RNA sequence: GGGAACGACUCGAGUAGAGUCGAAAAAUAGGGCCUGGCAUGAACCGAAAGGUGAUGAUGGCAGUCGAGGCUCUAGAGGCUGGAGUUGGCGAGGUCGUGAUAGGCUCGGGGCUACGUGAAAACCCGACAGGAAAAGUCUGUUCGCAGACUUUUCCUGAAAAGAAACAACAACAACAAC
Reactivity to DMS in 0.01 (KOAc 150mM, MgCl2 10mM, bicine 150mM(pH8.5), 24C), signal-to-noise 1, nucleotides 027 to 126: a140u010a070g010g000g010c020c000u000g020g020c000a070u000g000a200a020c010c000g010a090a070a190g010g010u000g010a160u010g010a110u000g010g060c070a060g030u000c050g010a040g000g000c000u000c020u010a030g010a120g030g020c060u000g000g000a080g010u010u000g000g020c040g030a030g030g020u000c090g000u000g010a060u010a030g010g000c090u020c100g000g020g000g020c040u020a010c090g030u030g020a090a090a070a180c020c000c010g000a200